[RMDB]
RNA sequence: GGGAACGACUCGAGUAGAGUCGAAAAGAUACGAGAUACGUCAGGCGGUGGACGCAUAAUUCCGCUCAUUGGAAUGGUCUUCCAUUUGAGAAAUCCGUGAUUGCUGAUCUUGAACUCGGGUUUCCGGAUAGACUUCGGGUUGUCUCUCUCGGAGCGACAUCACUAAAGCGUUCGCGCUUUAGUGAUGAAAAGAAACAACAACAACAAC
Reactivity to DMS in 0.01 (KOAc 150mM, MgCl2 10mM, bicine 150mM(pH8.5), 24C), signal-to-noise 2, nucleotides 027 to 156: g010a200u030a060c050g000a160g060a100u000a020c020g000u010c030a070g040g020c040g020g040u000g010g010a030c030g020c070a090u000a060a160u000u000c090c010g020c070u010c050a120u000u000g030g010a020a040u010g010g010u000c110u000u000c010c010a100u000u000u000g020a080g010a050a080a040u000c020c000g000u000g010a160u000u000g040c070u010g010a130u020c040u010u000g000a030a070c030u000c000g040g010g000u000u000u000c020c000g040g010a160u000a100g000a080c040u000u000c030g010g000g010u000u020g000u000c060u010c050u000c000u000c050g040g020a080g050c040g020a180
Reactivity to 2A3 in 0.01 (KOAc 150mM, MgCl2 10mM, bicine 150mM(pH8.5), 24C), signal-to-noise 4, nucleotides 027 to 156: g040a010u120a060c050g000a020g020a180u070a070c060g030u010c050a000g060g000c010g030g020u030g010g030a010c020g030c130a050u160a160a050u150u010c040c010g000c030u060c070a090u050u110g020g020a030a050u070g060g040u040c030u030u000c000c010a050u080u030u080g090a120g000a020a050a040u020c020c020g030u030g080a210u060u100g100c110u070g020a150u100c030u090u110g030a060a040c020u020c000g030g020g010u010u030u010c000c020g000g050a050u060a070g060a040c000u040u010c040g010g000g000u060u030g030u070c030u000c000u000c010u050c100g050g000a010g020c040g020a010